[RMDB]
RNA sequence: GGGAACGACUCGAGUAGAGUCGAAAAAUUACUUAAUAUUUUCAACAUUUAAAGUAUCAGCUGAUGAAGUAAGUUGUUACACCUUACCCAGUGUCCUACACAUUUCAGUAUCCAGGAAACACCAUUCUGUGAUAAUGGUAAACAACCAUGAUGACAGUCAAGUACAGCUAUUCGUAGCUGUACUUGAAAAAGAAACAACAACAACAAC
Reactivity to 2A3 in 0.01 (KOAc 150mM, MgCl2 10mM, bicine 150mM(pH8.5), 24C), signal-to-noise 2, nucleotides 027 to 156: a000u010u020a000c000u110u100a080a080u120a300u270u070u100u130c090a140a120c020a080u260u220u220a150a080a050g000u000a080u050c040a000g000c040u070g020a120u150g020a080a050g070u080a020a000g050u040u110g070u160u040a030c040a030c010c000u000u020a020c000c030c000a040g000u020g020u050c020c010u140a030c030a020c020a080u030u090u080c040a060g050u040a040u000c040c020a000g070g020a120a170a000c020a010c020c020a030u080u000c020u030g040u020g030a060u030a060a020u000g030g000u050a150a140a110c020a030a030c020c000a000u050g030a030u020g010a020c040a030g040
Reactivity to DMS in 0.01 (KOAc 150mM, MgCl2 10mM, bicine 150mM(pH8.5), 24C), signal-to-noise 1, nucleotides 027 to 156: a110u010u010a120c040u000u020a070a130u000a110u020u020u000u000c020a040a100c000a130u010u010u000a060a050a130g020u000a020u000c020a100g020c010u000g020a050u020g040a050a100g010u000a130a100g010u000u000g040u000u010a040c010a080c040c050u010u000a070c020c010c010a120g030u000g020u000c020c030u000a040c090a010c040a070u000u000u000c070a070g010u000a060u010c040c050a150g020g000a100a040a120c050a080c050c010a070u000u000c060u000g020u000g000a040u010a010a010u000g010g030u000a060a090a110c180a100a120c030c000a020u000g020a000u000g000a040c000a020g010